[RMDB]
RNA sequence: GGGAACGACUCGAGUAGAGUCGAAAAGUACAGGACCUGGAAAUGGCCUAGGAGAGAAGGGAGACACAUCUGGACCAGAAGGCUCCGGCGGCAGUGGACCUCAAAGAAGAGGGGGUGAUAACCAUGGACGAGGACGGGGAAGAGGACGAGGACGAGGACCUUACAGAACAUUCGUGUUCUGUAAGGUAAAAGAAACAACAACAACAAC
Reactivity to 2A3 in 0.01 (KOAc 150mM, MgCl2 10mM, bicine 150mM(pH8.5), 24C), signal-to-noise 3, nucleotides 027 to 156: g060u070a040c030a030g030g020a050c000c010u040g030g030a080a080a050u140g010g000c040c030u060a050g080g020a030g000a020g010a050a060g040g040g010a060g020a000c060a000c000a090u040c040u060g010g020a040c000c020a050g060a160a070g120g000c040u040c050c000g020g000c020g020g000c010a010g030u050g010g020a070c020c010u030c060a120a170a050g100a080a010g010a080g020g000g000g010g000u030g010a060u040a090a010c010c000a030u080g040g000a020c040g000a020g030g010a050c060g010g000g000g000a010a030g040a010g020g000a000c020g020a020g020g010a010c010g010a050g040g000
Reactivity to DMS in 0.01 (KOAc 150mM, MgCl2 10mM, bicine 150mM(pH8.5), 24C), signal-to-noise 1, nucleotides 027 to 156: g000u000a180c030a110g020g000a090c010c000u040g020g020a100a070a170u000g010g000c010c000u000a090g050g000a080g020a030g010a110a090g000g010g040a100g030a080c080a080c070a100u000c040u020g000g050a130c040c020a180g000a080a100g000g020c040u000c000c030g030g000c050g030g010c060a110g000u000g010g020a060c020c020u000c060a030a040a090g010a170a050g000a080g020g000g020g000g030u010g000a120u010a040a030c020c020a120u000g000g010a060c040g000a060g040g020a050c040g030g000g020g000a040a090g030a050g020g020a040c060g010a100g040g010a080c010g040a080g020g000

Structure probing data (2A3 and DMS) for a 207-nucleotide construct. The RNA was probed in 150 mM KOAc, 10 mM MgCl2 and 150 mM bicine (pH 8.5) at 24 C. Source: RMDB library OK3TST, as collected in RNAgym. The 2A3 profile rests on 2,097 reads.